[RMDB]
RNA sequence: GGGAACGACUCGAGUAGAGUCGAAAAAAAGUUAGUUAUGGUAGUCUGACUCUUAAUGGUUUAUGGCUUGGUAAUAACGUUUAUUGUCCUAGACAUGUUAUUGCUGAAGAUGUAACCAAGGAGAUAGAUUAUGAAACUUGUUUUAUGAUGAUGAGGAAGGUACGUCAAUCUUCGGAUUGACGUACCUAAAAGAAACAACAACAACAAC
Reactivity to 2A3 in 0.01 (KOAc 150mM, MgCl2 10mM, bicine 150mM(pH8.5), 24C), signal-to-noise 1, nucleotides 027 to 156: a000a010a000g060u040u050a010g000u030u020a120u240g050g000u000a010g000u000c000u000g050a140c000u040c000u000u020a170a180u230g010g050u040u060u140a040u040g120g000c030u000u000g040g060u000a000a000u010a000a000c000g020u000u180u020a120u010u110g120u050c110c150u030a000g000a050c000a000u160g000u020u010a000u000u000g000c010u030g000a000a000g010a000u080g050u030a000a000c000c000a000a010g000g040a000g000a010u050a010g000a000u050u000a000u100g080a150a030a000c050u070u060g040u010u050u040u060a070u110g090a170u000g000a000u130g020a030g040g000a140
This 207-nucleotide RNA was probed chemically with 2A3. Reactivities are rounded to 0.1 and cut off at 0 and 3. The reactions ran in a buffer of 150 mM KOAc, 10 mM MgCl2 and 150 mM bicine (pH 8.5), at 24 C.